[RMDB]
RNA sequence: GGGAACGACUCGAGUAGAGUCGAAAAAGCAAACUCCUCUGGAGUCCUUCGGAUCCAAAGGAGAAAACUACCGGCGGAGGGUGAUCCACUCGGAGUUGGACGGGAAAAGCACAUCCAGAGGACCCCUACACUGCUCGGUUCGCCGAGCAGAAAAGAAACAACAACAACAAC
Reactivity to DMS in 0.01 (KOAc 150mM, MgCl2 10mM, bicine 150mM(pH8.5), 24C), signal-to-noise 2, nucleotides 027 to 129: a060g070c140a020a020a020c000u000c000c020u020c000u000g000g020a020g050u040c080c010u060u060c150g000g000a110u030c000c060a020a210a040g010g000a040g030a030a040a050a030c070u050a090c000c060g040g000c000g070g000a070g030g000g030u030g010a180u030c000c000a110c070u000c100g000g000a070g060u030u040g010g010a140c060g000g040g060a010a080a020a070g050c150a110c060a100u020c030c030a110g030a030g020g040a090c060c010c000c010u030a030c110a300
Reactivity to 2A3 in 0.01 (KOAc 150mM, MgCl2 10mM, bicine 150mM(pH8.5), 24C), signal-to-noise 4, nucleotides 027 to 129: a030g100c080a080a030a010c010u000c000c000u000c000u010g000g000a030g110u090c030c000u170u100c140g050g030a040u000c000c000a030a000a040g040g000a020g050a020a030a000a030c020u070a140c000c000g020g000c010g010g020a030g030g000g010u080g060a180u010c000c000a040c060u020c020g020g010a040g030u120u060g020g040a010c030g010g020g060a020a150a050a000g050c040a010c020a150u010c000c000a010g010a050g010g000a010c000c000c000c000u040a020c080a010
Chemical mapping of a 170-nucleotide RNA with DMS and 2A3. The data come from the RNA Mapping Database (RMDB), library 15KLIB. The RNA was probed in 150 mM KOAc, 10 mM MgCl2 and 150 mM bicine (pH 8.5) at 24 C. In probing experiments dimethyl sulfate is read out at A N1 and C N3, which are open when not base-paired.